Notes
Chemical mapping of a 177-nucleotide RNA with DMS and 2A3. The RNA was probed in 150 mM KOAc, 10 mM MgCl2 and 150 mM bicine (pH 8.5) at 24 C. The data come from the RNA Mapping Database (RMDB), library M2PK50.

[RMDB]
RNA sequence: GGGAACGACUCGAGUAGAGUCGAAAAUCCACGUCCUUCGGGACGUGGAAAAUACGGCACGGGAGCCGAAGAAAUCCCGAAGCGGAGUGCAGCGCAGCACAAAAAGGUGAGUCUUCGGACUCACCAACACACGAUGUUAGUUCGCUAACAUCGUGUGAAAAGAAACAACAACAACAAC
Reactivity to DMS in 0.01 (KOAc 150mM, MgCl2 10mM, bicine 150mM(pH8.5), 24C), signal-to-noise 2, nucleotides 027 to 126: u000c000c000a000c000g020u000c000c030u000u030c180g030g000g020a000c000g030u000g000g010a010a010a100a090u000a250c020g000g010c010a120c050g010g000g000a090g030c000c010g000a100a100g010a030a100a110u000c000c010c010g000a160a190g000c070g020g000a110g030u000g020c020a150g030c070g000c080a100g040c030a020c100a030a050a090a050a070g030g060u000g000a000g000u000c000u000u010c240g030g010a030c020u010c000a000c000c000a040a020
Reactivity to 2A3 in 0.01 (KOAc 150mM, MgCl2 10mM, bicine 150mM(pH8.5), 24C), signal-to-noise 2, nucleotides 027 to 126: u000c000c010a010c010g010u010c010c000u030u100c160g100g000g010a010c000g010u000g010g000a000a000a000a000u070a020c010g000g010c030a020c060g000g040g030a000g020c010c060g040a040a020g100a020a080a010u020c000c010c010g000a080a020g030c030g060g070a190g010u030g010c010a020g020c110g010c160a050g000c020a010c010a050a020a000a030a000g000g000u000g000a000g000u000c030u040u170c240g030g000a000c000u010c000a000c000c000a000a000